[RMDB]
Description
The record gives the reactivity of an RNA of 177 nucleotides to DMS and 2A3. For 2A3 the reverse transcriptase was SuperScript II with manganese. DMS (dimethyl sulfate) methylates the pairing face of unpaired adenines and cytosines. Conditions: 150 mM KOAc, 10 mM MgCl2 and 150 mM bicine (pH 8.5), 24 C. Values cover nucleotides 27 to 126. The data come from the RNA Mapping Database (RMDB), libraries RFM100 and RFMREP.
RNA sequence: GGGAACGACUCGAGUAGAGUCGAAAAACUGCUGGGAGAGGAAUGUCUUGUCUUCAUCCGGUUGCCUGCGCCACUGUUCUGGUGGCGUCUGGCACUGGUGCAAGACAGAGCUGUGCUUCCCCGAGAGCAACGGGUUGUUGUUCGCAACAACCCGUUGAAAAGAAACAACAACAACAAC
Reactivity to DMS in 0.01 (KOAc 150mM, MgCl2 10mM, bicine 150mM(pH8.5), 24C), signal-to-noise 1, nucleotides 027 to 126: a120c040u010g000c040u010g010g000g000a080g000a060g000g000a150a060u000g000u010c010u010u030g000u010c010u000u000c120a070u020c010c000g010g010u010u030g020c010c000u000g010c000g010c000c000a000c000u000g050u030u030c260u070g020g000u000g040g000c020g000u010c060u000g000g000c000a010c000u010g000g000u000g000c110a000a000g000a000c010a010g000a040g010c040u010g000u010g000c040u000u000c000c000c000c010g000a090g000a070g000
Reactivity to 2A3 in 0.01 (KOAc 150mM, MgCl2 10mM, bicine 150mM(pH8.5), 24C), signal-to-noise 3, nucleotides 027 to 126: a000c050u100g000c060u060g020g000g020a200g020a000g020g070a120a100u080g030u010c040u040u050g010u010c010u030u040c060a040u090c030c000g040g000u220u130g000c000c000u000g010c000g000c000c000a040c010u080g140u300u170c120u300g040g010u000g000g000c010g000u020c030u000g000g000c000a000c000u000g000g020u010g030c090a000a010g010a000c000a000g040a000g010c050u070g040u160g110c000u020u010c000c010c000c000g080a060g000a000g110